The data come from the RNA Mapping Database (RMDB), library OK1LIB. This 177-nucleotide RNA was probed chemically with 2A3. The RNA was probed in 150 mM KOAc, 10 mM MgCl2 and 150 mM bicine (pH 8.5) at 24 C. Reactivities are given for positions 27 through 126.
RNA sequence: GGGAACGACUCGAGUAGAGUCGAAAAAUGCAUUUCUCUAACUACAAGUGUUGGAAGACGCAACAGCAGCAAGUCACUACACAACUAUCUGUAAUUACGCGAUGACCAAACGCUUGUGCGCAUCGUGCCGCGUCAGGUCAUUCGUGACCUGACGCGGAAAAGAAACAACAACAACAAC
Reactivity to 2A3 in 0.01 (KOAc 150mM, MgCl2 10mM, bicine 150mM(pH8.5), 24C), signal-to-noise 1, nucleotides 027 to 126: a020u060g000c020a050u000u060u000c010u010c110u050a020a020c000u050a040c060a040a050g100u000g000u000u000g010g060a010a050g070a050c050g170c060a100a250c000a020g050c000a000g000c160a180a000g020u000c010a010c070u120a130c060a000c000a120a060c050u050a050u170c100u170g050u130a080a080u010u020a000c000g090c000g000a000u190g040a020c050c050a120a000a050c060g050c000u050u150g020u080g020c060g080c160a000u170c040g010u080g070